The record gives the reactivity of an RNA of 177 nucleotides to DMS and 2A3.
2A3 adducts were read by reverse transcription with SuperScript II with manganese.
For DMS the reverse transcriptase was MarathonRT.
Source: RMDB library OK1LIB, as collected in RNAgym.
RNA sequence: GGGAACGACUCGAGUAGAGUCGAAAACGUCGUGAACUAGCGACAAUGCAUUAGGUCCAUCGUUAUCUAACCGAAACAUCGUGACUAGUUUUAGAAUAGAACCAGGAGAGGGCGCUGGCAAACAAAGACGGUGUGUAUUAUUCGUAGUACGCGCCGUAAAAGAAACAACAACAACAAC
Reactivity to DMS in 0.01 (KOAc 150mM, MgCl2 10mM, bicine 150mM(pH8.5), 24C), signal-to-noise 4, nucleotides 027 to 126: c120g010u000c000g020u020g000a030a010c010u000a050g010c070g000a020c050a070a050u020g010c060a070u040u010a120g010g000u020c100c080a070u010c070g000u020u000a060u030c050u010a110a070c040c010g000a120a080a110c020a030u010c080g010u000g020a060c000u000a020g000u000u000u000u000a030g010a030a050u010a050g010a060a110c040c010a080g000g020a070g000a070g010g000g000c010g010c000u010g000g010c100a060a060a070c120a040a300a300g000
Reactivity to 2A3 in 0.01 (KOAc 150mM, MgCl2 10mM, bicine 150mM(pH8.5), 24C), signal-to-noise 4, nucleotides 027 to 126: c040g030u020c020g020u020g050a040a020c030u010a030g000c020g040a020c000a010a030u050g000c010a040u000u110a020g000g000u000c020c010a060u050c050g030u040u080a070u050c050u040a000a050c030c010g010a030a000a020c030a040u050c030g040u040g060a060c010u010a050g020u020u000u010u060a040g010a060a030u050a020g020a010a020c000c010a010g000g020a050g010a010g010g010g000c000g000c000u000g010g000c000a030a040a010c030a020a170a000g300